Notes:
An RNA of 177 nucleotides, treated with 2A3 and DMS and read out base by base. 2A3 adducts were read by reverse transcription with SuperScript II with manganese. The data come from the RNA Mapping Database (RMDB), library OK2TST. For 2A3, 19,617 sequencing reads were counted. Conditions: 150 mM KOAc, 10 mM MgCl2 and 150 mM bicine (pH 8.5), 24 C.
RNA sequence: GGGAACGACUCGAGUAGAGUCGAAAAGUAGCGCGGACCACGGGACAGCGCGACGGCCACCGGGGUCUCGCGACUCACGUCCGCGCGGCGCAGCCCAGUGGCCAGCCGGUCGGCCAAUGCAUCCAGCCGUUAACCUCUUAUUCGUAAGAGGUUAACGAAAAGAAACAACAACAACAAC
Reactivity to 2A3 in 0.01 (KOAc 150mM, MgCl2 10mM, bicine 150mM(pH8.5), 24C), signal-to-noise 5, nucleotides 027 to 126: g030u040a020g010c010g000c010g010g010a010c020c040a110c170g030g030g060a060c080a090g050c040g000c020g020a050c100g020g020c010c010a060c060c110g280g010g000g000u010c010u010c010g000c000g140a150c000u020c010a050c050g010u000c000c000g000c010g000c000g000g010c010g000c020a090g020c010c000c020a030g110u100g040g000c020c010a020g040c030c020g050g030u100c030g010g000c000c020a030a030u110g020c010a040u040c040c030a010g060c030
Reactivity to DMS in 0.01 (KOAc 150mM, MgCl2 10mM, bicine 150mM(pH8.5), 24C), signal-to-noise 9, nucleotides 027 to 126: g020u000a120g020c010g030c020g010g010a030c020c140a120c170g000g010g010a100c190a110g010c010g010c040g010a030c160g010g000c010c020a160c120c110g010g010g020g020u000c010u000c030g000c020g010a090c030u000c060a100c190g000u000c010c000g010c030g000c010g000g010c040g020c120a160g010c010c000c020a100g020u010g010g010c010c010a090g000c020c030g000g010u000c120g010g010c020c030a090a080u010g000c090a080u010c040c040a120g000c160